[RMDB]
RNA sequence: GGGAACGACUCGAGUAGAGUCGAAAAGUGCGCUAUUUCGAUAGCGCACAAAGGCGGCGAGUCUCGCUCGGCGCCGCGCGACAGCGCGCAGCGCAGCCGGAACAUAACGCCACUUCGGUGGCGUUAAGGAAUAUCAAAGGUUCGCCUUUGAUAUUCCAAAAGAAACAACAACAACAAC
Reactivity to 2A3 in 0.01 (KOAc 150mM, MgCl2 10mM, bicine 150mM(pH8.5), 24C), signal-to-noise 3, nucleotides 027 to 126: g000u000g000c000g020c000u010a010u010u090u030c080g090a010u010a000g000c010g010c000a000c000a000a000a000g010g010c010g020g000c010g020a010g070u030c030u040c170g060c020u030c060g060g000c000g000c020c020g000c010g000c000g030a140c060a210g210c050g010c010g000c080a010g000c000g010c020a010g010c020c020g040g050a090a020c050a060u070a010a000c000g010c000c000a000c020u030u090c220g080g000u010g020g000c000g000u000u000a000a010
Reactivity to DMS in 0.01 (KOAc 150mM, MgCl2 10mM, bicine 150mM(pH8.5), 24C), signal-to-noise 4, nucleotides 027 to 126: g010u000g010c000g000c000u000a010u000u000u030c160g010a020u000a000g010c000g020c000a010c000a010a030a110g000g000c010g010g020c020g010a080g020u000c060u010c090g000c030u010c090g000g010c000g030c040c020g020c010g010c010g000a190c300a180g000c020g030c010g010c020a040g000c000g000c020a080g000c010c020g010g010a100a100c120a140u000a000a010c000g000c000c000a000c000u000u010c170g020g020u000g010g000c000g000u000u000a000a050